Chemical mapping of a 177-nucleotide RNA with 2A3 and DMS.
The 2A3 profile rests on 950 reads.
2A3 adducts were read by reverse transcription with SuperScript II with manganese.
The RNA was probed in 150 mM KOAc, 10 mM MgCl2 and 150 mM bicine (pH 8.5) at 24 C.
Reactivities are rounded to 0.1 and cut off at 0 and 3.
The data come from the RNA Mapping Database (RMDB), library RFM100.
The DMS profile rests on 1,788 reads.

RNA sequence: GGGAACGACUCGAGUAGAGUCGAAAAUGUCGCUACGGUGAUUGGACACUGACACUGAGUCAACUAGCCUUGUGCGCGCGGUUCUUCGCGCGCGGAACCGGAGGACGGUCCGAGCCACGAGGGGGGAUCGGUUGUGGACAUUCGUGUCCACAACCGAAAAAGAAACAACAACAACAAC
Reactivity to 2A3 in 0.01 (KOAc 150mM, MgCl2 10mM, bicine 150mM(pH8.5), 24C), signal-to-noise 2, nucleotides 027 to 126: u160g000u000c020g000c130u010a030c060g000g030u040g050a200u110u120g050g020a010c020a000c040u030g010a020c000a010c190u170g040a070g070u010c000a020a040c100u080a080g050c000c000u060u190g050u120g040c000g000c000g000c000g010g010u110u000c030u090u190c030g000c000g000c000g000c000g000g010a030a040c000c000g040g010a030g120g000a010c020g000g000u030c000c020g030a020g060c000c000a030c020g020a040g000g020g020g000g040g000a030
Reactivity to DMS in 0.01 (KOAc 150mM, MgCl2 10mM, bicine 150mM(pH8.5), 24C), signal-to-noise 2, nucleotides 027 to 126: u070g010u030c010g010c040u030a060c060g000g020u000g000a120u000u000g000g000a040c110a120c120u000g000a110c150a140c140u000g000a160g000u000c090a020a190c080u020a090g020c020c000u000u020g000u050g040c030g010c010g060c000g020g000u010u070c150u020u000c020g060c000g000c040g030c010g000g000a030a100c120c030g000g000a090g040g000a090c030g000g060u020c020c050g000a140g030c010c070a080c120g000a160g000g000g030g030g010g000a230